[RMDB]
An RNA of 177 nucleotides, treated with DMS and 2A3 and read out base by base.
RNA sequence: GGGAACGACUCGAGUAGAGUCGAAAAGAGGCUGGUAACGCGUCGAUACAAGAGAUAUUGCUCUAUAAACAGUAACGUCGUUAUCUGUCAUGCCACCGAGGGUUAGCGGUCAUGGUUAACCAAAUAGUGUUCAGCUAACAUUCGUGUUAGCUGAACAAAAAGAAACAACAACAACAAC
Reactivity to DMS in 0.01 (KOAc 150mM, MgCl2 10mM, bicine 150mM(pH8.5), 24C), signal-to-noise 4, nucleotides 027 to 126: g010a070g000g000c000u000g010g000u010a020a000c000g050c050g000u000c090g000a210u020a070c160a100a020g000a020g000a250u030a120u020u000g000c010u020c010u000a080u020a080a040a090c210a130g000u050a070a020c000g000u020c020g020u020u000a020u000c000u030g020u020c000a080u010g010c020c060a140c050c040g030a110g020g010g020u000u000a010g020c000g000g010u040c220a090u040g010g020u030u000a000a030c010c000a040a070a060u020a120g000
Reactivity to 2A3 in 0.01 (KOAc 150mM, MgCl2 10mM, bicine 150mM(pH8.5), 24C), signal-to-noise 6, nucleotides 027 to 126: g120a000g000g010c010u000g000g000u000a010a000c000g000c000g030u030c020g040a020u040a150c090a070a020g000a000g030a020u050a170u300u300g140c000u000c010u010a110u120a110a200a040c090a030g060u120a040a010c000g060u110c020g000u180u000a020u000c010u030g010u020c010a060u120g050c020c000a040c010c010g020a120g020g010g010u000u030a010g000c030g000g060u090c070a090u190g140g030u030u020a000a010c000c000a020a010a040u180a030g100
Background:
It was measured as part of the RMDB libraries RFM100 and RFMREP. Values cover nucleotides 27 to 126. The RNA was probed in 150 mM KOAc, 10 mM MgCl2 and 150 mM bicine (pH 8.5) at 24 C.